This 177-nucleotide RNA was probed chemically with 2A3 and DMS. The reactions ran in a buffer of 150 mM KOAc, 10 mM MgCl2 and 150 mM bicine (pH 8.5), at 24 C. Source: RMDB library OK1LIB, as collected in RNAgym. DMS adducts were read by reverse transcription with MarathonRT.
RNA sequence: GGGAACGACUCGAGUAGAGUCGAAAAGAAGAAAUAAAGAACGUACGUUCGAGGCCCCGAUCCAUCUUAUCUGGCGGGAUAUGAUGGGAAGAACCGCCGACGUACGGAAGGGCCGAAAAGAAAGAAAGGAAAACUCUAUCUUCGGAUAGAGUUUUCCAAAAGAAACAACAACAACAAC
Reactivity to 2A3 in 0.01 (KOAc 150mM, MgCl2 10mM, bicine 150mM(pH8.5), 24C), signal-to-noise 2, nucleotides 027 to 126: g220a020a000g140a000a140a060u210a010a090a070g060a030a020c010g010u040a020c000g070u080u080c090g010a090g020g010c040c010c000c000g000a020u010c000c000a000u010c000u020u030a000u000c030u060g180g070c190g070g070g000a000u020a060u050g010a020u030g000g000g000a000a030g010a030a100c010c030g070c030c040g040a040c000g010u010a010c020g010g000a000a000g000g070g000c030c030g050a100a070a020a000g160a070a040a000g070a000a030a020
Reactivity to DMS in 0.01 (KOAc 150mM, MgCl2 10mM, bicine 150mM(pH8.5), 24C), signal-to-noise 2, nucleotides 027 to 126: g020a150a070g000a040a070a070u030a090a070a070g030a050a150c010g020u000a020c010g020u020u030c060g000a200g000g000c010c040c050c010g000a160u060c000c000a000u000c000u020u000a020u000c020u010g000g040c230g020g000g000a020u000a030u010g000a000u000g000g000g000a040a120g000a110a060c010c070g030c050c040g000a000c050g010u000a010c020g010g010a090a090g000g000g000c000c000g000a020a030a070a080g010a060a060a060g000a060a110a160